[RMDB]
RNA sequence: GGGAACGACUCGAGUAGAGUCGAAAAGAUAUGGAUCCUCACUGAAGCGAAGACAGUACAUCGGAAACGAUGUAUCGAGCUUCAGGUGACAUGGAUCCUAAGUCAAAUCGUCGCUUCGGCGACGAAAGCUAUGCCGUAGGUUCGCCUACGGCAUAGCAAAAGAAACAACAACAACAAC
Reactivity to 2A3 in 0.01 (KOAc 150mM, MgCl2 10mM, bicine 150mM(pH8.5), 24C), signal-to-noise 2, nucleotides 027 to 126: g000a000u030a010u070g000g010a000u000c000c050u070c060a300c080u030g030a020a010g000c030g170a130a000g010a020c020a020g050u030a000c000a030u010c000g020g000a060a000a000c020g000a000u000g010u000a000u040c000g000a000g000c000u020u010c000a000g040g050u030g070a070c180a300u300g020g000a000u030c000c000u000a040a000g010u010c030a020a040a220u060c010g020u030c010g010c030u010u070c300g130g000c000g000a000c000g000a030a000a000
Reactivity to DMS in 0.01 (KOAc 150mM, MgCl2 10mM, bicine 150mM(pH8.5), 24C), signal-to-noise 3, nucleotides 027 to 126: g010a030u000a240u000g000g000a000u000c000c020u000c240a180c000u000g020a000a030g050c000g030a060a180g020a030c300a090g010u010a000c000a010u000c000g020g000a050a040a010c000g030a030u000g000u010a000u000c000g010a030g000c000u000u000c000a040g000g020u000g020a130c120a120u000g030g010a030u000c000c000u010a010a110g020u000c010a070a060a080u000c020g010u000c000g030c000u000u000c250g030g010c000g010a000c000g010a010a020a080